Structure probing data (2A3 and DMS) for a 177-nucleotide construct.
RNA sequence: GGGAACGACUCGAGUAGAGUCGAAAACAGGUAGUCGAGGAGAGUAUCCUCAGGCGCUCGAGUGAUUCAUGGCUAAGGAACUCGGCAAAAUGGCCUCGUAACUUCGGGAGAAGAGGCGCCCCACUCCCGCUUCACUAUCUUUCGAGAUAGUGAAGCGAAAAGAAACAACAACAACAAC
Reactivity to 2A3 in 0.01 (KOAc 150mM, MgCl2 10mM, bicine 150mM(pH8.5), 24C), signal-to-noise 7, nucleotides 027 to 126: c030a010g030g140u160a030g040u090c040g010a000g000g030a040g000a020g060u200a100u040c010c000u010c020a000g020g000c040g000c040u100c090g020a030g030u070g050a140u150u070c050a050u140g140g000c060u130a080a100g060g000a030a030c010u020c030g000g010c040a030a030a040a090u110g100g010c000c000u000c010g010u040a040a050c020u050u120c170g060g030g010a030g010a090a010g010a010g000g000c000g030c000c000c000c000a040c030u040c010c010
Reactivity to DMS in 0.01 (KOAc 150mM, MgCl2 10mM, bicine 150mM(pH8.5), 24C), signal-to-noise 2, nucleotides 027 to 126: c090a050g010g040u050a050g010u000c040g000a050g000g000a010g000a210g040u040a060u000c030c020u010c000a080g010g010c060g020c040u040c050g010a020g000u030g020a160u020u000c060a090u040g000g000c050u020a080a050g010g000a040a020c050u000c000g000g000c070a070a000a070a070u010g030g020c000c020u010c000g000u010a070a130c050u000u040c050g010g050g020a070g010a080a090g000a020g000g000c050g010c000c020c000c040a110c100u010c020c050
2A3 adducts were read by reverse transcription with SuperScript II with manganese. Reactivities are given for positions 27 through 126. The reactions ran in a buffer of 150 mM KOAc, 10 mM MgCl2 and 150 mM bicine (pH 8.5), at 24 C.